RNA sequence: GGGAACGACUCGAGUAGAGUCGAAAAGAGCGGAGGGUAAUUAGGACAGGAUCCUAAUAAACCUGCGAGUGAGACGUUAAAAAAACUUCCACUGGCAAAACGCAGGCCAACAGUAACACUCCAGAGAACCUUGUUUUCAAUUCGUUGAAAACAAGGUAAAAGAAACAACAACAACAAC
Reactivity to 2A3 in 0.01 (KOAc 150mM, MgCl2 10mM, bicine 150mM(pH8.5), 24C), signal-to-noise 7, nucleotides 027 to 126: g100a010g020c060g010g020a040g010g020g010u050a080a030u010u010a010g020g000a010c040a070g180g070a140u010c000c000u010a010a010u050a050a050a010c000c000u010g000c020g020a010g010u010g020a230g000a010c040g010u020u030a090a240a050a040a020a010a010c010u010u010c000c000a010c010u040g150g010c070a040a090a030a050c030g000c010a010g030g010c010c010a060a030c020a070g020u030a030a020c020a000c050u020c010c010a020g010a010g020a150
Reactivity to DMS in 0.01 (KOAc 150mM, MgCl2 10mM, bicine 150mM(pH8.5), 24C), signal-to-noise 7, nucleotides 027 to 126: g000a130g020c110g000g000a060g000g000g010u000a080a070u010u000a010g000g020a030c030a220g020g010a300u000c000c000u000a000a010u010a040a220a270c020c010u000g000c010g000a020g020u000g000a120g010a010c080g000u000u020a000a010a090a110a040a020a030c010u000u000c010c010a020c010u010g000g000c220a050a040a070a300c030g000c020a010g010g020c080c070a080a080c200a100g000u010a080a050c040a050c020u000c010c030a110g010a090g000a100